This 207-nucleotide RNA was probed chemically with 2A3. The reactions ran in a buffer of 150 mM KOAc, 10 mM MgCl2 and 150 mM bicine (pH 8.5), at 24 C.
[RMDB]
RNA sequence: GGGAACGACUCGAGUAGAGUCGAAAAGAUAUGGACGUGUGGUUAGCGACAUGAGCGUGACGCCUCGGAAACGAGCGCGACCCCACGCUCAACAGCGCUAACGUAACAUCACGUCCUAAGUCAAACUCUCUGAGAUAGUUCGCUAUCUCAGAGAGAACGAUAGUUGGGACUUCGGUCCCAACUAUCGAAAAGAAACAACAACAACAAC
Reactivity to 2A3 in 0.01 (KOAc 150mM, MgCl2 10mM, bicine 150mM(pH8.5), 24C), signal-to-noise 1, nucleotides 027 to 156: g030a040u120a000u130g020g000a010c010g000u000g030u010g000g040u020u000a000g000c000g100a140c040a080u040g000a000g000c000g000u010g000a060c020g000c020c000u000c000g010g010a080a080a050c010g010a000g030c210g000c030g130a130c070c000c000c000a010c010g020c000u020c000a020a030c100a020g030c000g020c010u010a020a000c000g000u040a070a030c070a110u210c030a010c000g000u000c000c000u020a090a010g030u000c010a000a000a120c000u000c000u000c000u000g000a000g000a000u000a000g030u090u090c210g000c170u000a000u000c000u000c000a010g020a000g000a000g000a000a000